The record gives the reactivity of an RNA of 177 nucleotides to DMS. The RNA was probed in 150 mM KOAc, 10 mM MgCl2 and 150 mM bicine (pH 8.5) at 24 C.
[RMDB]
RNA sequence: GGGAACGACUCGAGUAGAGUCGAAAAGAUAUGGAAGGGCGUAACUCGCUUGGAUUUAUAUACAGCAAACAUAUCGGAAACGAUAUGGUAGCUGUAUAUUGUCAGCGAGUUGAUCCCUUCCUAAGUCGCUAACUGAAAUCUUCGGAUUUCAGUUAGCAAAAGAAACAACAACAACAAC
Reactivity to DMS in 0.01 (KOAc 150mM, MgCl2 10mM, bicine 150mM(pH8.5), 24C), signal-to-noise 1, nucleotides 027 to 126: g000a150u010a300u000g010g000a010a020g000g010g040c180g030u000a020a000c010u000c020g030c000u000u010g050g010a020u000u010u000a000u000a000u000a010c000a010g000c010a030a160a300c000a000u000a000u000c000g000g010a200a180a170c030g030a000u000a000u000g010g010u000a290g000c010u010g030u050a000u010a000u010u000g020u000c000a060g000c000g000a000g010u000u000g000a040u000c000c000c000u000u000c000c000u000a000a020g040u040c140